[RMDB]
RNA sequence: GGGAACGACUCGAGUAGAGUCGAAAACAGUCUCCAGAGAGGAGGGUCUUGCCAGGCUGCUGGGAGAACCUGUCCGGACACGUAGGAGUCACUGGUGGUCUUAAAGAGAAUAAUAGCUACAGCGGCACUAACUGUCUUGGUUCGCCAAGACAGUUAGAAAAGAAACAACAACAACAAC
Reactivity to 2A3 in 0.01 (KOAc 150mM, MgCl2 10mM, bicine 150mM(pH8.5), 24C), signal-to-noise 3, nucleotides 027 to 126: c010a020g050u020c000u020c020c010a010g080a030g010a060g110g030a000g030g020g000u000c010u070u130g300c030c000a060g070g040c090u250g000c020u040g160g010g010a050g020a030a070c020c000u080g200u030c010c000g010g020a020c030a030c060g080u090a070g020g070a030g030u020c030a020c040u030g010g020u040g040g000u030c000u030u110a120a100a020g110a010g070a110a060u170a180a050u090a100g060c020u040a030c010a070g000c030g050g010c000a000
Reactivity to DMS in 0.01 (KOAc 150mM, MgCl2 10mM, bicine 150mM(pH8.5), 24C), signal-to-noise 3, nucleotides 027 to 126: c070a080g020u010c020u020c000c050a120g010a140g010a170g010g010a300g000g000g000u000c020u000u010g020c030c030a030g020g020c160u000g040c040u000g000g000g010a060g000a060a060c020c010u000g010u010c030c030g000g000a080c090a060c130g020u010a120g010g000a110g020u020c070a110c030u000g010g030u000g000g030u010c030u000u000a050a080a120g000a070g000a080a050u000a050a110u000a050g010c050u000a050c080a040g010c030g010g000c080a240